[RMDB]
This 177-nucleotide RNA was probed chemically with 2A3 and DMS. It was measured as part of the RMDB library TTRDES. The reactions ran in a buffer of 150 mM KOAc, 10 mM MgCl2 and 150 mM bicine (pH 8.5), at 24 C. For DMS, 3,710 sequencing reads were counted. The 2A3 profile rests on 9,906 reads.

RNA sequence: GGGAACGACUCGAGUAGAGUCGAAAAGAUAUGGACAACGCGAGCAACAGCCUAUCUGGAUCGGAAACGAUCCUAGGACAUGCUCCGUUGUCCUAAGUCAAAACGUCUCCCCUUCGGGGGAGACGAACCUUUCAAAGAACUUCGGUUCUUUGAAAGGAAAAGAAACAACAACAACAAC
Reactivity to 2A3 in 0.01 (KOAc 150mM, MgCl2 10mM, bicine 150mM(pH8.5), 24C), signal-to-noise 3, nucleotides 027 to 126: g000a000u020a010u060g000g000a000c000a000a000c030g160c300g060a010g000c070a100a300c140a300g020c000c010u090a100u160c240u140g000g000a000u000c000g000g000a000a010a000c000g000a000u000c000c000u000a000g000g000a070c090a210u300g000c010u000c010c010g000u000u000g000u000c000c000u000a000a000g000u010c000a010a000a070a160c010g000u000c000u010c000c000c000c020u040u170c270g060g000g000g010g000a000g000a000c000g000a000a010
Reactivity to DMS in 0.01 (KOAc 150mM, MgCl2 10mM, bicine 150mM(pH8.5), 24C), signal-to-noise 3, nucleotides 027 to 126: g010a020u000a030u010g000g000a030c000a010a020c000g010c240g030a010g000c000a140a120c300a200g000c010c000u000a010u020c300u000g010g000a020u000c010g030g000a010a010a020c000g010a020u000c010c010u000a000g000g010a050c070a080u000g010c000u000c010c010g000u000u000g010u000c000c000u010a000a050g000u010c020a090a040a120a290c010g010u000c000u000c000c000c000c000u000u020c170g070g020g010g000g010a000g000a010c010g000a020a070